[RMDB]
RNA sequence: GGGAACGACUCGAGUAGAGUCGAAAAGAUGUCAUUCGGCUUGGGUACAUCGCGUGGCACUACAAUUACUAUGACGCAUCAUGGUGGUUGUGUACUCGUGGCUUGAUGCGUCAAGUUAUGAGUGAACUAUGUUACUGUACCCCGAGUGAUAUCGCCACGUGUCGACUCUGUUCGCAGAGUCGAUGCGAAAAGAAACAACAACAACAAC
Reactivity to DMS in 0.01 (KOAc 150mM, MgCl2 10mM, bicine 150mM(pH8.5), 24C), signal-to-noise 4, nucleotides 027 to 156: g000a040u000g010u010c010a090u000u000c000g010g020c110u000u010g020g000g030u000a030c020a030u000c190g010c040g040u000g010g030c010a050c040u000a050c020a050a040u000u000a030c030u000a100u000g010a060c100g020c100a050u000c000a030u000g020g030u010g010g030u000u000g020u000g020u000a050c040u000c060g040u010g010g010c030u000u000g010a020u000g020c140g010u000c000a010a010g030u000u000a040u010g010a250g010u010g010a080a050c030u000a050u010g030u000u000a080c170u010g020u000a040c020c000c000c010g000a040g030u000g000a050u000a020u000c020g000c030c030a100
Reactivity to 2A3 in 0.01 (KOAc 150mM, MgCl2 10mM, bicine 150mM(pH8.5), 24C), signal-to-noise 9, nucleotides 027 to 156: g000a000u010g000u010c000a000u010u000c010g070g070c210u200u270g070g000g000u010a000c000a020u050c080g000c010g030u020g010g010c020a010c030u200a130c070a180a160u080u030a010c010u040a120u230g010a010c020g020c040a030u010c000a020u060g060g050u060g050g080u160u110g090u090g080u200a070c050u040c100g080u100g090g000c010u010u010g000a000u010g010c030g010u000c000a000a000g000u010u020a020u020g010a000g000u010g020a080a020c010u020a020u040g010u030u080a070c110u030g000u000a000c000c000c000c010g000a000g000u000g000a000u010a000u010c000g010c000c000a030
An RNA of 207 nucleotides, treated with DMS and 2A3 and read out base by base. Reactivities are rounded to 0.1 and cut off at 0 and 3. The 2A3 profile rests on 68,422 reads. For DMS the reverse transcriptase was MarathonRT. Conditions: 150 mM KOAc, 10 mM MgCl2 and 150 mM bicine (pH 8.5), 24 C.